[RMDB]
RNA sequence: GGGAACGACUCGAGUAGAGUCGAAAACGUGAACAUCGCUCUGCUAAGUCCCGUCGUUCUUCCAGUCAGAGCGAGAUUGUAAGCAACCUUAUGCGCAAUGAAGACAUAGAGGGACUUCUGUAAGAAGACGACCGUAGCUAUUCGUAGCUACGGUCGUAAAAGAAACAACAACAACAAC
Reactivity to DMS in 0.01 (KOAc 150mM, MgCl2 10mM, bicine 150mM(pH8.5), 24C), signal-to-noise 1, nucleotides 027 to 126: c210g050u030g000a140a020c210a100u000c000g010c000u000c000u000g020c140u000a070a020g020u040c030c020c090g050u000c120g010u030u040c000u010u080c050c060a090g000u070c000a030g000a000g010c000g000a020g000a020u000u000g030u000a180a150g030c060a000a150c140c020u030u010a070u010g000c000g000c030a080a200u010g090a190a150g000a020c050a010u040a140g000a130g020g030g050a060c000u030u000c040u000g000u010a110a200g000a040a060g000
Reactivity to 2A3 in 0.01 (KOAc 150mM, MgCl2 10mM, bicine 150mM(pH8.5), 24C), signal-to-noise 2, nucleotides 027 to 126: c080g070u040g070a120a010c020a060u000c000g030c000u000c000u000g120c140u070a000a060g050u010c030c000c000g150u000c030g020u000u000c000u190u020c050c000a000g030u100c090a000g000a030g000c110g000a000g020a000u060u180g030u060a000a200g000c000a040a020c000c110u110u270a130u130g000c040g000c040a000a120u120g000a090a000g020a000c010a050u270a010g050a140g000g000g000a000c000u040u000c000u100g070u080a030a020g030a010a010g050